Source information
The data come from the RNA Mapping Database (RMDB), library OK2TST. An RNA of 177 nucleotides, treated with DMS and 2A3 and read out base by base. Reactivities are given for positions 27 through 126. The reactions ran in a buffer of 150 mM KOAc, 10 mM MgCl2 and 150 mM bicine (pH 8.5), at 24 C.
[RMDB]
RNA sequence: GGGAACGACUCGAGUAGAGUCGAAAAGUUGGCAAUCGCUCCUAUUGGUUGGACGAACGACGAUAUGCCAGAUUUGGGCAAAGAAAAUACCUUCCAACAAUGUAUCAGUGAAAUGGCUCUGGCUGGAUGUCCAGUAAAUGUUCGCAUUUACUGGACAAAAAGAAACAACAACAACAAC
Reactivity to DMS in 0.01 (KOAc 150mM, MgCl2 10mM, bicine 150mM(pH8.5), 24C), signal-to-noise 4, nucleotides 027 to 126: g010u020u000g000g010c040a060a040u010c020g010c110u030c020c020u000a150u000u000g010g000u010u000g010g010a130c160g020a070a070c170g010a120c050g010a070u000a070u000g010c000c000a040g010a100u000u000u000g010g010g010c050a040a090a130g010a090a090a060a090u000a060c030c040u000u000c010c020a050a060c210a080a070u020g020u010a040u000c050a060g020u000g000a030a080a100u010g000g000c030u000c010u000g010g020c050u000g000g000a200
Reactivity to 2A3 in 0.01 (KOAc 150mM, MgCl2 10mM, bicine 150mM(pH8.5), 24C), signal-to-noise 2, nucleotides 027 to 126: g040u030u030g000g010c030a040a080u020c050g010c080u000c030c000u090a160u100u280g120g060u060u070g010g050a060c110g040a110a030c090g100a000c030g000a020u050a150u200g010c000c000a030g040a040u060u110u100g050g000g060c070a110a070a040g110a050a140a050a010u200a060c030c030u000u000c020c020a040a050c030a040a110u110g000u120a050u160c060a040g010u030g070a020a080a160u110g000g000c000u000c000u070g080g050c040u000g020g060a090